[RMDB]
RNA sequence: GGGAACGACUCGAGUAGAGUCGAAAACUUGGAGCUGCGUGACGAGCUGCGCACCCAGCACGGCGCUGUGUUCGCCACCGACGGCGACGGUGAGGCGAUCCUCGCCGGCUAUCACCACUGGGGCACCAAUGAUUAGUGAUUUCGAUCACUAAUCAUUAAAAGAAACAACAACAACAAC
Reactivity to DMS in 0.01 (KOAc 150mM, MgCl2 10mM, bicine 150mM(pH8.5), 24C), signal-to-noise 9, nucleotides 027 to 126: c070u000u010g010g010a110g020c050u000g000c070g020u000g010a100c070g000a090g010c050u000g010c060g010c060a170c030c030c020a050g010c080a140c050g000g010c020g010c300u000g010u000g010u000u000c010g020c010c010a060c030c020g000a130c070g010g010c060g010a110c010g000g000u000g010a150g020g010c070g000a040u000c010c010u000c010g010c010c000g010g010c090u000a080u010c090a090c060c060a110c070u000g010g000g000g010c070a090c110c100
Reactivity to 2A3 in 0.01 (KOAc 150mM, MgCl2 10mM, bicine 150mM(pH8.5), 24C), signal-to-noise 8, nucleotides 027 to 126: c020u050u100g060g020a050g020c040u040g010c040g050u050g060a100c050g040a030g040c040u040g010c050g000c020a090c010c020c000a010g010c050a040c040g010g000c010g000c110u020g050u030g020u090u010c000g010c010c000a030c020c030g070a090c060g050g060c040g020a040c010g010g030u050g070a150g050g030c030g020a030u040c000c000u000c000g000c010c000g000g000c010u100a080u120c030a030c070c000a020c040u040g000g000g040g000c020a020c020c030
This 177-nucleotide RNA was probed chemically with DMS and 2A3. The RNA was probed in 150 mM KOAc, 10 mM MgCl2 and 150 mM bicine (pH 8.5) at 24 C. Values are in units of 0.01, from 0 to 300, in steps of 10. DMS adducts were read by reverse transcription with MarathonRT. The data come from the RNA Mapping Database (RMDB), library OK2TST. For 2A3 the reverse transcriptase was SuperScript II with manganese.